[RMDB]
RNA sequence: GGGAACGACUCGAGUAGAGUCGAAAAGAUAUGGAUCGGUGUCUCGAGGCAACAGCGAUACCUCGGAAACGAGGUCAUCGACAUGCCUCCACCGAUCCUAAGUCAAAUCACAUCUUCGGAUGUGAAACUGUAGGAUUUUGUUCGCAAAAUCCUACAGAAAAGAAACAACAACAACAAC
Reactivity to DMS in 0.01 (KOAc 150mM, MgCl2 10mM, bicine 150mM(pH8.5), 24C), signal-to-noise 3, nucleotides 027 to 126: g010a030u000a130u000g000g010a000u020c000g000g040u000g010u040c300u000c220g000a000g010g020c010a130a080c300a130g000c000g020a020u000a010c000c010u010c010g020g000a020a030a070c020g010a000g000g010u000c260a000u000c030g010a020c080a300u000g010c000c010u000c000c000a020c000c000g010a000u000c000c000u000a000a060g000u010c040a100a060a190u020c000a010c000a010u000c000u000u020c210g030g000a000u000g010u000g010a000a070a120
Reactivity to 2A3 in 0.01 (KOAc 150mM, MgCl2 10mM, bicine 150mM(pH8.5), 24C), signal-to-noise 3, nucleotides 027 to 126: g020a030u040a020u060g000g010a000u010c020g050g030u030g070u000c230u160c300g000a010g010g010c150a300a060c100a300g010c010g000a010u000a010c000c010u000c010g000g020a010a010a000c000g010a000g010g030u040c060a010u000c030g060a030c030a110u300g010c000c010u030c000c010a000c010c000g000a010u010c000c000u000a000a000g000u010c030a030a050a150u030c000a020c000a020u000c000u040u120c300g210g000a020u020g010u020g000a060a060a020

Source: RMDB library TTRDES, as collected in RNAgym. The record gives the reactivity of an RNA of 177 nucleotides to DMS and 2A3. Reactivities are given for positions 27 through 126. The reactions ran in a buffer of 150 mM KOAc, 10 mM MgCl2 and 150 mM bicine (pH 8.5), at 24 C.